Description: Conditions: 150 mM KOAc, 10 mM MgCl2 and 150 mM bicine (pH 8.5), 24 C. Chemical mapping of a 207-nucleotide RNA with DMS and 2A3. 2A3 adducts were read by reverse transcription with SuperScript II with manganese. For DMS, 1,560 sequencing reads were counted.
RNA sequence: GGGAACGACUCGAGUAGAGUCGAAAAGCUGGUUAUUCUCUAGACAGCUCUCUAAAGUGUGGACCAGACCAGCAGCAUCAAUAUCUUGGGGAGCUUGAUAGAAAUGCAUAUUCUUGGGCUCUACCCCAGACUCACUGAAGGAGAAUCUCUAGGGAUGACCACCGUAAACUUUCGAGUUUACGGUGGUAAAAGAAACAACAACAACAAC
Reactivity to DMS in 0.01 (KOAc 150mM, MgCl2 10mM, bicine 150mM(pH8.5), 24C), signal-to-noise 1, nucleotides 027 to 156: g000c000u000g000g000u000u000a090u000u020c010u000c060u010a050g020a100c020a070g020c080u000c090u000c010u000a140a240a050g000u000g020u000g020g000a090c050c080a100g020a080c020c000a070g040c090a120g020c050a060u020c040a060a270u000a020u000c000u000u080g020g000g000g010a270g000c020u010u000g010a050u000a020g010a040a030a150u000g030c060a110u000a150u000u000c010u000u020g020g020g000c020u000c050u010a150c030c000c000c020a110g020a030c050u010c050a050c040u020g030a210a180g000g000a100g000a040a300u000c050u000c000u000a050g000g010g040a090u000g000
Reactivity to 2A3 in 0.01 (KOAc 150mM, MgCl2 10mM, bicine 150mM(pH8.5), 24C), signal-to-noise 2, nucleotides 027 to 156: g010c000u000g010g060u090u040a080u140u010c000u000c000u000a000g010a090c090a160g080c060u000c000u010c000u100a060a080a030g000u020g010u050g110g020a060c020c050a050g060a040c000c010a000g000c000a000g060c020a040u050c020a070a290u060a030u150c020u030u020g020g010g030g000a030g010c020u010u020g050a060u100a070g040a030a080a030u300g060c090a140u140a130u270u030c000u000u010g000g020g000c000u000c010u090a140c000c000c010c010a000g000a010c010u010c030a010c000u040g010a170a060g040g030a010g000a040a100u070c000u000c000u020a000g030g000g040a010u040g030